[RMDB]
RNA sequence: GGGAACGACUCGAGUAGAGUCGAAAAUCUGGCCCGAGGCCGCUCGUCGGGAAUCGGACACUGGAACUAGUACUCUGGUCAAUGCGGAUUGCCUGUGGCGGUGUUGGCUGGACGACCGAGUGUCGGCGAACAGCUAGAUGUUCGCAUCUAGCUGUUCAAAAGAAACAACAACAACAAC
Reactivity to 2A3 in 0.01 (KOAc 150mM, MgCl2 10mM, bicine 150mM(pH8.5), 24C), signal-to-noise 7, nucleotides 027 to 126: u000c010u020g040g010c020c010c030g050a100g060g030c000c010g010c050u110c080g190u050c030g040g000g000a010a040u040c030g050g010a020c020a010c140u030g020g050a070a030c020u030a060g090u150a100c050u010c010u050g030g000u040c030a030a020u070g050c050g140g070a110u060u080g180c010c010u120g030u120g040g000c010g000g000u040g110u050u060g000g000c000u010g010g000a020c020g020a020c000c010g050a100g030u120g030u040c000g030g040c050
Reactivity to DMS in 0.01 (KOAc 150mM, MgCl2 10mM, bicine 150mM(pH8.5), 24C), signal-to-noise 7, nucleotides 027 to 126: u000c030u000g000g010c030c020c050g010a060g010g010c020c020g020c020u000c080g020u000c070g010g000g000a070a040u000c030g010g000a090c070a030c020u000g000g010a080a080c090u010a100g010u000a150c270u000c010u000g010g010u000c040a060a040u000g010c030g000g000a070u010u010g010c010c010u000g020u010g010g030c010g020g020u000g000u000u000g010g010c000u000g000g010a050c040g000a210c050c020g000a110g010u000g010u000c020g010g020c160